[RMDB]
RNA sequence: GGGAACGACUCGAGUAGAGUCGAAAAGGGCCAUACCGGGCCCGAUACCGGAAUUAGUAGUUUUCUACGAGAGGCCCAAUCUGCGGCCGAAUGCAGUGUAGGUCGAAGCGAGGACCGAGACUCGAUAAUUACGUCGAUAGAUGGACGAUUCCAUCAAAUCAUGAUGCUAUUUCGAUAGCAUCAUGAUAAAAGAAACAACAACAACAAC
Reactivity to DMS in 0.01 (KOAc 150mM, MgCl2 10mM, bicine 150mM(pH8.5), 24C), signal-to-noise 2, nucleotides 027 to 156: g010g000g070c010c020a180u030a140c100c020g040g010g000c000c010c060g000a060u010a050c110c020g010g010a080a130u000u000a080g020u030a040g000u010u000u000u000c020u000a040c010g010a160g000a230g000g000c000c010c000a110a180u000c060u020g000c050g060g000c000c050g010a050a080u000g020c110a160g010u020g000u000a200g010g050u000c020g030a110a040g010c000g010a300g010g000a050c010c000g010a210g000a120c040u000c000g020a130u000a070a090u020u020a050c120g010u000c000g030a130u010a100g000a030u000g000g010a160c110g020a240u010u010c010c000a030u000c020a060a160
Reactivity to 2A3 in 0.01 (KOAc 150mM, MgCl2 10mM, bicine 150mM(pH8.5), 24C), signal-to-noise 2, nucleotides 027 to 156: g010g000g010c010c000a040u080a110c050c000g020g000g010c000c080c010g010a020u040a020c000c030g020g070a080a080u070u090a070g020u010a010g030u050u060u110u130c020u030a030c010g010a040g000a080g030g030c010c000c020a000a060u040c030u050g020c030g040g030c020c040g010a050a030u130g020c040a010g050u020g000u110a010g020g000u020c030g030a080a030g020c050g040a040g020g040a010c040c030g030a010g040a020c020u000c000g030a010u040a090a020u140u120a060c100g040u050c020g060a040u090a150g010a010u020g020g020a030c120g030a100u050u070c000c000a010u000c020a020a130
The data come from the RNA Mapping Database (RMDB), library OK3TST. An RNA of 207 nucleotides, treated with DMS and 2A3 and read out base by base. For DMS, 2,725 sequencing reads were counted. The RNA was probed in 150 mM KOAc, 10 mM MgCl2 and 150 mM bicine (pH 8.5) at 24 C. For 2A3 the reverse transcriptase was SuperScript II with manganese.